[RMDB]
RNA sequence: GGGAACGACUCGAGUAGAGUCGAAAAGUUUUGUCUGUUUCUCCUUACGUUUGUAAUGCCCCUGGUUGUGGCGUUUCAGACGUUACUAAGCUAUAUUUAGGUGGUAUGAGCUACUUUUGUGUAGAUCUAACCUGCUUGUUCGCAAGCAGGAAAAGAAACAACAACAACAAC
Reactivity to 2A3 in 0.01 (KOAc 150mM, MgCl2 10mM, bicine 150mM(pH8.5), 24C), signal-to-noise 3, nucleotides 027 to 129: g030u040u020u130u080g000u000c030u000g000u000u000u000c000u000c000c060u110u030a000c020g040u010u010u000g000u030a000a000u040g010c000c010c000c010u100g280g000u200u150g070u080g010g000c000g000u000u030u030c000a000g000a000c000g020u000u000a000c060u050a080a050g080c010u050a030u000a040u170u080u050a000g060g000u070g030g000u130a120u220g080a040g040c000u000a000c000u000u030u040u160g080u070g030u090a000g010a050u000c070u010a000a040

Source: RMDB library 15KLIB, as collected in RNAgym. Chemical mapping of a 170-nucleotide RNA with 2A3. The RNA was probed in 150 mM KOAc, 10 mM MgCl2 and 150 mM bicine (pH 8.5) at 24 C.